Structure probing data (2A3 and DMS) for a 177-nucleotide construct. For DMS the reverse transcriptase was MarathonRT. For DMS, 1,752 sequencing reads were counted.
[RMDB]
RNA sequence: GGGAACGACUCGAGUAGAGUCGAAAAGUCUUAACUGCACCAGGUUCAGUUACGUUAUGUGCAGCGUAUAAGUUUGGUAGUACCUCAUUAACAUCAAGACCAGCGGUCUCCGCUAGGGUACGAGGAACAUUAGGCUGGGUUUCGACCCAGCCUAAUGAAAAGAAACAACAACAACAAC
Reactivity to 2A3 in 0.01 (KOAc 150mM, MgCl2 10mM, bicine 150mM(pH8.5), 24C), signal-to-noise 1, nucleotides 027 to 126: g050u000c050u070u040a100a050c040u040g000c010a000c030c010a040g130g090u120u070c080a060g080u140u070a060c060g010u050u080a140u140g090u040g070c030a000g000c000g030u080a100u010a200a160g070u030u050u090g080g000u030a070g060u040a110c000c000u000c040a080u020u180a050a000c010a120u100c060a050a000g030a090c000c000a010g040c010g000g080u080c140u020c040c010g050c030u050a050g110g000g000u040a040c040g000a050g000g050a090a000
Reactivity to DMS in 0.01 (KOAc 150mM, MgCl2 10mM, bicine 150mM(pH8.5), 24C), signal-to-noise 2, nucleotides 027 to 126: g020u000c030u010u010a040a160c050u000g000c050a060c030c110a200g020g000u000u020c100a080g010u010u000a020c050g030u010u010a060u010g010u010g010c030a010g010c100g020u010a080u010a030a080g010u000u000u000g010g010u010a140g000u000a120c010c020u010c070a070u010u010a060a080c100a080u000c130a040a070g000a080c040c050a070g000c030g010g000u010c070u020c020c010g030c020u000a050g010g010g010u000a010c090g000a110g020g000a080a200